[RMDB]
RNA sequence: GGGAACGACUCGAGUAGAGUCGAAAAGAUAUGGACUGUGGGAGCUGGGUACUCGGAAACGAGUACUUUCAGCGACGAUCACACAUGUCCUAAGUCAAACUGUAACGGUGUUCGCACCGUUACAGAACGUAGUGGACGAGUUCGCUCGUCCACUACGAAAAGAAACAACAACAACAAC
Reactivity to 2A3 in 0.01 (KOAc 150mM, MgCl2 10mM, bicine 150mM(pH8.5), 24C), signal-to-noise 1, nucleotides 027 to 126: g010a000u070a030u110g000g010a010c020u000g000u010g020g020g000a070g020c060u040g090g080g000u000a000c000u000c000g020g020a010a040a040c020g000a000g000u000a010c000u000u080u080c060a000g030c000g020a050c040g000a030u060c000a020c000a000c010a120u300g000u000c010c010u000a030a000g030u000c080a060a090a090c020u010g000u000a010a000c000g000g000u000g060u060u070c290g040c060a000c000c000g000u020u000a000c000a010g000a000a010
Reactivity to DMS in 0.01 (KOAc 150mM, MgCl2 10mM, bicine 150mM(pH8.5), 24C), signal-to-noise 2, nucleotides 027 to 126: g000a000u000a300u010g010g020a010c010u000g020u000g030g000g000a150g020c000u020g000g000g000u020a000c000u000c000g010g000a010a060a140c000g020a020g000u000a000c000u000u000u000c020a000g070c040g030a060c170g040a220u010c110a130c050a030c020a010u010g040u000c000c000u010a040a140g000u000c010a090a120a180c000u000g000u000a010a010c000g040g000u000g030u000u020c220g000c000a000c000c000g040u000u000a000c000a010g000a060a060

Conditions: 150 mM KOAc, 10 mM MgCl2 and 150 mM bicine (pH 8.5), 24 C.
This 177-nucleotide RNA was probed chemically with 2A3 and DMS.
It was measured as part of the RMDB library TTRDEL.
For DMS the reverse transcriptase was MarathonRT.
For DMS, 1,305 sequencing reads were counted.
The 2A3 profile rests on 2,721 reads.